RNA sequence: GGGAACGACUCGAGUAGAGUCGAAAAGAUAUGGACUGCGGUGCCAGCUCGUAUCGGAAACGAUAUAGAGCGGUAAUACCGUGUCCUAAGUCAAACAACGAGUCCCUGUUCGCAGGGACUCGUUGAACAAAGAUAAGGGGUUCGCCCCUUAUCUUUGAAAAGAAACAACAACAACAAC
Reactivity to DMS in 0.01 (KOAc 150mM, MgCl2 10mM, bicine 150mM(pH8.5), 24C), signal-to-noise 5, nucleotides 027 to 126: g000a030u000a300u010g010g000a010c000u010g050c000g000g010u000g010c020c020a130g030c000u000c000g010u000a000u000c000g010g000a130a070a190c000g010a020u000a000u000a060g000a010g010c020g000g010u000a070a090u000a110c000c000g010u000g010u000c000c010u010a030a090g000u000c010a120a100a290c020a000a010c010g000a010g020u010c000c000c000u000g010u000u010c200g020c000a010g020g000g010a000c000u000c000g000u000u000g000a080a190
Reactivity to 2A3 in 0.01 (KOAc 150mM, MgCl2 10mM, bicine 150mM(pH8.5), 24C), signal-to-noise 2, nucleotides 027 to 126: g020a020u100a020u090g000g020a020c050u190g010c010g020g030u020g010c030c050a090g000c040u010c010g000u000a000u000c000g020g000a110a050a000c040g010a000u010a010u060a210g010a000g010c000g010g010u070a080a050u090a050c010c000g010u010g010u000c010c020u000a110a030g050u030c070a110a070a150c020a010a010c030g010a010g000u010c010c000c040u010g020u040u130c300g000c050a000g000g030g130a010c000u000c000g000u000u000g000a010a010